Chemical mapping of a 177-nucleotide RNA with DMS and 2A3. Conditions: 150 mM KOAc, 10 mM MgCl2 and 150 mM bicine (pH 8.5), 24 C. For 2A3, 1,123 sequencing reads were counted. Reactivities are rounded to 0.1 and cut off at 0 and 3. It was measured as part of the RMDB library OK2TRN.

[RMDB]
RNA sequence: GGGAACGACUCGAGUAGAGUCGAAAACGCUGAAAUGACUUGCGGGCUAUAUGGUAAUAAACCUUGGAAGCAGCCUCCAAAUAUAUCAAGAAUACUUGCUGAUUUCCUUGAAUCUACAUCAUAUUCAGCAGCAUAACAAUUUCGAUUGUUAUGCUGCAAAAGAAACAACAACAACAAC
Reactivity to DMS in 0.01 (KOAc 150mM, MgCl2 10mM, bicine 150mM(pH8.5), 24C), signal-to-noise 1, nucleotides 027 to 126: c090g000c080u000g000a070a110a110u010g000a040c080u020u010g030c080g020g000g010c040u000a040u000a030u000g000g040u000a040a080u000a070a160a100c160c000u000u000g000g000a100a050g000c030a060g000c060c100u000c070c040a020a030a070u010a080u010a110u010c100a040a110g020a090a080u000a040c130u000u000g000c050u010g010a070u000u000u000c030c040u000u000g000a060a050u010c080u000a070c120a040u010c070a060u000a100u000u010c060a130
Reactivity to 2A3 in 0.01 (KOAc 150mM, MgCl2 10mM, bicine 150mM(pH8.5), 24C), signal-to-noise 1, nucleotides 027 to 126: c030g010c030u070g030a070a000a090u050g030a080c040u000u100g020c050g000g010g000c030u020a020u010a050u270g010g000u030a090a050u070a110a270a130c020c000u020u020g020g000a030a000g010c010a000g000c010c020u000c000c000a030a190a000u170a000u010a020u080c030a050a000g060a160a050u070a150c020u060u080g070c020u030g060a290u000u000u070c020c000u000u000g010a040a020u040c030u050a070c020a030u090c020a020u050a060u130u070c040a110